[RMDB]
RNA sequence: GGGAACGACUCGAGUAGAGUCGAAAACAGUGACACACUCUGAGAGAGUCAGUGACUCUGUCUGUCAGACUCAGUCAGUCAGACAGACUCAGUGUGACUCAGUGUGUCUGACACAGACUCAGAGUCACAGACUGCUCCAAUUCGUUGGAGCAGUCUGAAAAGAAACAACAACAACAAC
Reactivity to 2A3 in 0.01 (KOAc 150mM, MgCl2 10mM, bicine 150mM(pH8.5), 24C), signal-to-noise 3, nucleotides 027 to 126: c020a010g080u040g120a010c010a000c010a000c110u070c100u130g060a090g010a010g010a000g080u030c020a040g070u020g130a020c000u000c000u000g010u010c010u010g040u010c010a020g010a000c020u010c280a020g130u080c010a000g020u000c000a010g040a020c010a010g010a020c010u010c010a100g080u120g050u070g160a020c010u010c040a040g000u010g000u010g010u050c010u000g020a010c000a000c020a090g040a030c000u000c030a030g030a010g000u000c010a010
Reactivity to DMS in 0.01 (KOAc 150mM, MgCl2 10mM, bicine 150mM(pH8.5), 24C), signal-to-noise 3, nucleotides 027 to 126: c110a110g020u000g000a070c070a060c130a040c040u000c120u000g010a070g000a140g020a030g010u000c000a090g010u010g020a030c070u010c020u000g010u000c000u000g000u000c020a040g010a000c010u000c150a150g010u000c160a030g020u000c000a030g010a010c010a030g020a010c070u000c050a040g030u000g030u000g010a010c000u000c010a140g000u000g010u010g010u000c070u000g000a110c010a040c070a090g020a150c030u000c020a120g000a040g010u010c100a100